[RMDB]
RNA sequence: GGGAACGACUCGAGUAGAGUCGAAAAAAAAGAUAUGGACAGAGGGAGAGAAGAGGGAACUAAGACAGUGCGUCGGAAACGACGCAUCGAGUUCCUCCUUCUCGAAGAACUCUGUCCUAAGUCAAAACUCCUAUAUUAUGUUCGCAUAAUAUAGGAGAAAAGAAACAACAACAACAAC
Reactivity to 2A3 in 0.01 (KOAc 150mM, MgCl2 10mM, bicine 150mM(pH8.5), 24C), signal-to-noise 2, nucleotides 027 to 126: a000a000a010a020g060a040u090a030u130g000g000a000c010a010g000a010g040g010g000a030g010a000g010a020a000g030a060g000g010g000a010a000c000u050a190a060g170a120c110a070g050u020g040c000g010u010c010g020g000a050a060a040c020g000a000c000g000c000a000u030c000g000a000g000u010u000c010c000u050c010c010u000u000c000u000c010g000a030a010g000a010a010c000u010c000u010g000u000c000c000u000a000a010g010u010c010a000a010a030a150
Reactivity to DMS in 0.01 (KOAc 150mM, MgCl2 10mM, bicine 150mM(pH8.5), 24C), signal-to-noise 5, nucleotides 027 to 126: a050a050a090a070g000a030u010a300u000g000g010a020c010a010g000a020g010g000g010a100g010a020g010a010a000g020a060g000g010g020a010a010c010u010a150a080g030a120c300a120g020u000g000c000g000u000c010g000g020a160a110a200c000g010a010c010g010c010a000u000c050g000a030g010u000u000c000c010u000c020c000u000u000c000u000c010g000a060a100g000a100a120c010u000c000u010g010u000c000c000u000a000a060g010u000c020a100a060a080a110
Conditions: 150 mM KOAc, 10 mM MgCl2 and 150 mM bicine (pH 8.5), 24 C. This 177-nucleotide RNA was probed chemically with 2A3 and DMS. For DMS, 6,902 sequencing reads were counted. Reactivities are given for positions 27 through 126. DMS adducts were read by reverse transcription with MarathonRT. DMS (dimethyl sulfate) methylates the pairing face of unpaired adenines and cytosines. 2A3 adducts were read by reverse transcription with SuperScript II with manganese.